[RMDB]
RNA sequence: GGGAACGACUCGAGUAGAGUCGAAAAGUUGCCCUUACCGGUGGCGUAUUUCUUGACCUGCGACGUGCCCGCGCACAGCAGCUCGACAUCGAACUCUUCGCACAGCUCGAUGACCUUGCCGAAGAUCCUCCGUAUCAUCAUUCGUGAUGAUACGGAGAAAAGAAACAACAACAACAAC
Reactivity to 2A3 in 0.01 (KOAc 150mM, MgCl2 10mM, bicine 150mM(pH8.5), 24C), signal-to-noise 2, nucleotides 027 to 126: g050u070u090g150c010c000c000u020u110a090c050c000g070g010u070g020g020c070g060u060a170u040u130u080c060u060u070g020a050c030c010u010g010c040g040a090c090g050u030g000c020c000c100g080c040g040c030a020c030a050g000c010a000g000c020u000c020g030a010c010a050u060c000g000a040a050c000u000c020u190u130c070g000c020a060c040a040g000c000u040c020g030a030u030g000a020c000c000u040u050g050c030c010g010a060a020g050a040u070c010
Reactivity to DMS in 0.01 (KOAc 150mM, MgCl2 10mM, bicine 150mM(pH8.5), 24C), signal-to-noise 4, nucleotides 027 to 126: g030u010u010g020c010c010c020u000u000a070c180c150g020g000u010g000g010c050g020u000a080u010u010u000c030u000u000g020a090c060c020u000g020c050g020a130c140g020u010g000c050c060c070g020c120g020c030a060c040a130g020c040a050g000c070u000c060g020a130c080a050u000c010g010a030a090c020u000c050u000u000c220g000c190a110c230a060g000c020u010c010g010a010u000g000a060c090c050u000u010g010c010c040g000a080a100g020a130u010c080
The record gives the reactivity of an RNA of 177 nucleotides to 2A3 and DMS. For 2A3, 2,291 sequencing reads were counted. The DMS profile rests on 3,062 reads. It was measured as part of the RMDB library OK2TST. For 2A3 the reverse transcriptase was SuperScript II with manganese.